[RMDB]
RNA sequence: GGGAACGACUCGAGUAGAGUCGAAAAUGCAGCAUAUUUAUUGUACACAAACUCACCGUGUGCAUGAAUGAGGUGUGAAUAUGGGAUGUAUGCAUAGGUAUGGAAGUGGAAUGAGCGUGUUCGAUGCAUAUAUAGAUAUUAUUAACUCUAUGUACUACCACAGAAGAUCUUUCGAGAUCUUCUGUGGAAAAGAAACAACAACAACAAC
Reactivity to DMS in 0.01 (KOAc 150mM, MgCl2 10mM, bicine 150mM(pH8.5), 24C), signal-to-noise 1, nucleotides 027 to 156: u010g030c010a040g020c040a110u010a030u000u010u000a030u000u000g050u000a100c020a040c010a070a110a110c040u020c050a060c120c030g030u010g000u010g000c040a050u000g010a080a190u000g000a120g010g010u000g010u000g000a070a050u000a020u010g020g020g040a100u000g030u000a090u000g000c040a080u020a100g020g040u000a070u050g030g010a040a080g020u000g000g030a060a080u000g000a080g010c040g080u010g020u000u010c110g020a070u000g000c050a070u010a040u000a050u000a060g000a070u000a120u000u010a220u020u000a070a080c090u000c000u000a030u000g010u010a040c010u010a170
Reactivity to 2A3 in 0.01 (KOAc 150mM, MgCl2 10mM, bicine 150mM(pH8.5), 24C), signal-to-noise 6, nucleotides 027 to 156: u080g000c020a020g000c020a050u040a120u160u080u060a140u120u140g020u030a020c020a000c020a020a260a090c070u140c130a090c090c100g000u010g000u020g000c010a000u060g050a040a050u100g010a050g000g040u040g010u040g070a060a040u080a090u120g050g010g020a020u020g030u080a030u040g010c040a030u020a070g060g000u050a040u110g020g050a060a040g050u050g010g060a080a070u100g020a030g030c050g000u030g030u060u040c020g020a030u050g020c040a010u010a000u000a000u030a100g010a040u040a030u240u060a090u100u170a110a040c010u000c020u030a050u090g030u040a050c020u070a060
Chemical mapping of a 207-nucleotide RNA with DMS and 2A3.
For DMS, 2,268 sequencing reads were counted.
DMS adducts were read by reverse transcription with MarathonRT.